[RMDB]
RNA sequence: GGGAACGACUCGAGUAGAGUCGAAAAGAAGAGGAGACUUCCCCAAGGGUAGGUGGAACGCCAGGGAACAAGGAAAUAGGAGAAGGAACGGUAGAAAAGAGCGAGCCCUCCGAUCCGAUGGGGCCCUAACGUAUGUACUUCGGUACAUACAAAAGAAACAACAACAACAAC
Reactivity to DMS in 0.01 (KOAc 150mM, MgCl2 10mM, bicine 150mM(pH8.5), 24C), signal-to-noise 9, nucleotides 027 to 129: g000a040a030g000a040g010g000a080g010a070c080u000u000c040c020c000c080a120a160g020g010g010u010a040g000g050u040g030g030a060a050c130g000c050c040a060g000g000g000a050a050c060a090a080g000g020a020a050a050u050a070g020g010a030g000a070a060g030g020a030a040c080g010g020u000a080g020a040a040a070a060g000a040g040c090g000a050g000c050c020c030u010c020c020g020a020u040c020c040g000a050u040g000g010g000g000c000c020c010u000a020a030c200
Reactivity to 2A3 in 0.01 (KOAc 150mM, MgCl2 10mM, bicine 150mM(pH8.5), 24C), signal-to-noise 9, nucleotides 027 to 129: g050a010a000g010a000g020g010a030g020a050c010u080u080c030c000c000c020a060a100g060g010g030u110a060g020g050u080g040g040a070a020c040g030c030c010a030g010g000g010a020a030c030a060a030g060g010a020a050a030u150a060g020g020a020g000a040a030g020g000a060a020c060g030g020u090a040g120a050a120a040a000g050a000g030c070g020a010g010c000c000c000u000c010c010g030a040u030c030c010g030a050u100g010g010g020g000c010c000c000u040a050a010c070